[RMDB]
RNA sequence: GGGAACGACUCGAGUAGAGUCGAAAAGAGCUUAGUUCAGAGGUAUGCUAUAACGGUAUGUGCCGUUUAUGUUCACAUACUUAGAUAUGGCUUCAAAUACCCUUCUAUAGUAUUUGAUCGAACUAUAGAUAGUAUUGUCAUUCGUGACAGUGCUAUCAAAAGAAACAACAACAACAAC
Reactivity to 2A3 in 0.01 (KOAc 150mM, MgCl2 10mM, bicine 150mM(pH8.5), 24C), signal-to-noise 2, nucleotides 027 to 126: g100a000g000c050u030u040a010g020u120u030c080a040g030a000g040g000u010a010u030g000c000u010a000u030a030a000c010g020g000u040a040u140g060u170g000c000c000g080u090u260u090a120u120g090u100u180c040a040c010a030u020a010c000u090u070a000g110a080u150a080u200g070g000c000u070u070c000a060a180a020u230a090c020c020c000u070u090c060u090a090u130a090g000u000a220u050u120u240g270a210u110c000g000a000a020c000u000a080u030a190

The record gives the reactivity of an RNA of 177 nucleotides to 2A3. Conditions: 150 mM KOAc, 10 mM MgCl2 and 150 mM bicine (pH 8.5), 24 C. 2A3 adducts were read by reverse transcription with SuperScript II with manganese. Reactivities are rounded to 0.1 and cut off at 0 and 3.